RNA sequence: GGGAACGACUCGAGUAGAGUCGAAAAGGUCGCCGACCUCAUGCGACGAGGCCUGGCCGCCAACCGCCCUACCGCGUUGUCCUCAGACCCCAGAACGGGAUUGCCUUUGGUGAGCGUCGGGACCGUCGCGCACGGAGACGUUCGCGUCUCCGUGCGCAAAAGAAACAACAACAACAAC
Reactivity to 2A3 in 0.01 (KOAc 150mM, MgCl2 10mM, bicine 150mM(pH8.5), 24C), signal-to-noise 2, nucleotides 027 to 126: g020g000u040c120g080c190c000g020a010c000c000u020c000a070u170g090c000g150a030c050g000a060g000g000c030c040u020g050g000c010c000g020c000c010a010a000c000c000g000c000c000c010u060a030c030c000g030c000g080u030u060g090u000c000c000u050c030a060g090a220c000c020c000c050a020g040a080a040c050g080g000g020a060u000u160g010c030c000u000u080u300g090g010u000g000a070g030c070g070u020c040g000g000g010a000c000c000g000u140c050